[RMDB]
RNA sequence: GGGAACGACUCGAGUAGAGUCGAAAAUGACUCCGGUGGUGCACUGGCCGACGAUUUUGCUGGCAUGCUGAUCGAGAGCCCCCUGUUCAAUGUCACGGUGGGAGAGGAGUCACGCUUGCGGGAAGAGAACGGCUAGUACAUUCGUGUACUAGCCGUUAAAAGAAACAACAACAACAAC
Reactivity to 2A3 in 0.01 (KOAc 150mM, MgCl2 10mM, bicine 150mM(pH8.5), 24C), signal-to-noise 1, nucleotides 027 to 126: u030g000a000c000u000c000c020g000g060u050g010g120u100g010c060a020c090u050g000g010c010c000g040a050c010g000a020u010u070u120u140g000c010u020g110g130c010a020u120g000c000u020g010a040u040c020g030a010g010a020g080c020c020c000c020c040u030g050u100u170c120a200a110u160g100u120c010a010c060g000g010u150g010g040g000a050g010a030g000g010a020g000u000c000a010c020g100c010u030u070g020c000g000g030g010a040a060g050a050g060
Reactivity to DMS in 0.01 (KOAc 150mM, MgCl2 10mM, bicine 150mM(pH8.5), 24C), signal-to-noise 2, nucleotides 027 to 126: u000g000a050c010u000c000c030g000g040u010g030g020u000g020c070a060c180u000g020g010c020c010g020a280c050g000a100u010u000u010u010g030c020u050g010g010c170a100u020g000c020u010g000a060u000c000g020a070g000a160g000c010c000c070c010c010u010g000u000u000c170a090a080u010g000u000c060a040c070g020g020u000g000g020g000a130g020a100g000g000a080g030u000c020a040c090g000c040u010u000g030c060g010g010g000a100a080g000a090g000